[RMDB]
RNA sequence: GGGAACGACUCGAGUAGAGUCGAAAAUACGCCAAUUUCGAUUGGCGUAACACGCAAACCGCCCGAAAGGCAUUUUAUGCGUACGGUGGCGAAAGCCUAAAAACGCACUGUCAUUCGUGACAGUGAAAUGUAGGUCCUGGUUCGCCAGGACCUACAUAAAAGAAACAACAACAACAAC
Reactivity to DMS in 0.01 (KOAc 150mM, MgCl2 10mM, bicine 150mM(pH8.5), 24C), signal-to-noise 2, nucleotides 027 to 126: u000a000c000g010c010c000a000a000u000u000u020c210g030a070u000u000g020g000c010g060u000a000a020c200a030c060g010c030a020a090a080c290c110g020c020c000c000g010a090a120a280g030g000c000a080u020u010u000u010a060u010g020c010g010u000a100c200g020g000u000g010g010c010g040a060a070a120g000c000c010u000a010a020a010a060a130c190g000c000a000c020u000g010u000c000a070u000u030c150g000u000g010a010c010a030g040u000g000a040a010
Reactivity to 2A3 in 0.01 (KOAc 150mM, MgCl2 10mM, bicine 150mM(pH8.5), 24C), signal-to-noise 2, nucleotides 027 to 126: u060a000c030g040c020c000a020a010u040u110u110c220g160a020u000u000g000g000c000g000u010a000a000c020a000c000g080c020a070a030a000c060c050g010c010c020c020g140a130a040a000g060g000c010a020u120u070u040u110a100u120g010c000g020u000a020c120g130g050u050g070g000c000g040a070a050a010g000c000c030u110a200a050a020a000a000c050g000c010a000c000u000g010u030c020a030u030u040c170g100u020g000a020c010a000g000u000g000a140a000
Overview
An RNA of 177 nucleotides, treated with DMS and 2A3 and read out base by base. The 2A3 profile rests on 1,329 reads. DMS adducts were read by reverse transcription with MarathonRT. The RNA was probed in 150 mM KOAc, 10 mM MgCl2 and 150 mM bicine (pH 8.5) at 24 C. For 2A3 the reverse transcriptase was SuperScript II with manganese.